An RNA of 177 nucleotides, treated with DMS and read out base by base.
[RMDB]
RNA sequence: GGGAACGACUCGAGUAGAGUCGAAAAUGGCGAUGCUGUCGCCGACUUCCAGGGUUUCGGCCGUCCGGCGGUGGAUCAGAAGACGACUCCAAAGAUAGAGCCGGACGCGACGAAUGAUGUCGCGAUGGACGAAAGCGAAGUUCGCUUCGCUUUCGUCAAAAGAAACAACAACAACAAC
Reactivity to DMS in 0.01 (KOAc 150mM, MgCl2 10mM, bicine 150mM(pH8.5), 24C), signal-to-noise 2, nucleotides 027 to 126: u000g020g010c050g000a030u000g070c130u000g030u000c000g020c010c020g000a100c150u000u000c000c020a120g000g000g000u000u000u000c020g030g010c080c030g010u000c000c010g010g020c000g020g020u000g010g000a060u000c050a090g020a180a150g030a220c250g000a050c150u010c020c000a010a140a110g000a160u000a180g030a190g010c020c000g010g000a030c000g020c060g010a000c000g000a100a100u000g000a080u020g000u000c010g000c030g010a060u000g000
The RNA was probed in 150 mM KOAc, 10 mM MgCl2 and 150 mM bicine (pH 8.5) at 24 C.
It was measured as part of the RMDB library OK2TRN.